[RMDB]
RNA sequence: GGGAACGACUCGAGUAGAGUCGAAAACCGCAUCAUCAUUACUAGACUUAAUUUGACUAGAAACUAUUCUACCAAAAACAACCUCUUUCAUCCAAAUAAAAAUAUCAAUCAUAGUAUCAAAUCAAAAAGGCCUAAUCAAACUAUACUUUCUCUCCUUUAUCUACUUAGACUUCGGUCUAAGUAGAUAAAAAGAAACAACAACAACAAC
Reactivity to 2A3 in 0.01 (KOAc 150mM, MgCl2 10mM, bicine 150mM(pH8.5), 24C), signal-to-noise 2, nucleotides 027 to 156: c020c010g010c040a160u140c010a010u010c000a020u020u150a080c050u020a050g030a090c030u150u210a200a160u110u140u100g040a020c010u010a020g090a070a140a050c040u050a080u110u020c030u050a100c060c010a000a060a020a110a040c060a050a080c030c020u070c040u050u150u090c040a060u040c020c010a080a070a080u200a100a140a010a010a040u180a040u080c020a080a000u080c020a040u010a040g000u040a030u090c040a070a120a090u000c010a010a000a110a180a030g080g000c010c000u050a060a030u070c010a040a060a020c040u070a050u060a230c010u080u140u040c020u020c010u020c030c000u000u010